[RMDB]
An RNA of 207 nucleotides, treated with DMS and 2A3 and read out base by base. The RNA was probed in 150 mM KOAc, 10 mM MgCl2 and 150 mM bicine (pH 8.5) at 24 C. For 2A3 the reverse transcriptase was SuperScript II with manganese.
RNA sequence: GGGAACGACUCGAGUAGAGUCGAAAAGAAGCGAUUGUAAAGGCGGUGGUGGCGAAGAUCGACACCGCUUCCAUCGAGAAAGCGGUGAUCGACAGGGUGUCGACCAAGACCACCAAGCCCCGGCGAAGACAAAGGCGCAACAAGCAGAAGAAUACUGCAUUAAAAGCCCAUUCGUGGGCUUUUAAUGAAAAGAAACAACAACAACAAC
Reactivity to DMS in 0.01 (KOAc 150mM, MgCl2 10mM, bicine 150mM(pH8.5), 24C), signal-to-noise 2, nucleotides 027 to 156: g010a120a100g010c040g040a150u010u000g020u020a060a060a120g000g060c020g050g040u010g000g070u010g070g050c040g040a170a220g010a120u000c000g010a080c030a000c030c000g010c060u010u000c010c000a190u020c090g000a300g000a030a030a070g000c030g040g000u010g000a050u000c030g010a040c020a140g000g000g030u010g000u000c030g000a060c030c040a040a150g010a080c010c010a020c020c030a030a190g020c020c000c020c050g000g000c040g050a090a140g000a090c050a030a100a030g030g020c050g000c060a080a120c030a060a100g000c040a100g010a050a080g000a150a110u000a080c030u020g030
Reactivity to 2A3 in 0.01 (KOAc 150mM, MgCl2 10mM, bicine 150mM(pH8.5), 24C), signal-to-noise 2, nucleotides 027 to 156: g090a070a000g010c020g110a110u050u070g060u280a190a040a040g030g020c070g010g050u040g000g020u040g010g000c030g080a100a060g010a170u030c000g000a010c000a010c000c050g010c000u000u000c010c000a170u130c060g080a080g100a300a040a010g010c000g000g040u010g000a300u010c000g010a010c000a010g100g000g000u020g020u050c010g010a040c050c000a030a020g090a080c030c010a010c000c040a020a030g010c000c000c000c000g000g050c010g000a020a010g010a030c120a080a080a000g040g000c010g040c040a010a050c040a030a060g000c020a040g000a100a000g010a080a000u110a140c060u130g010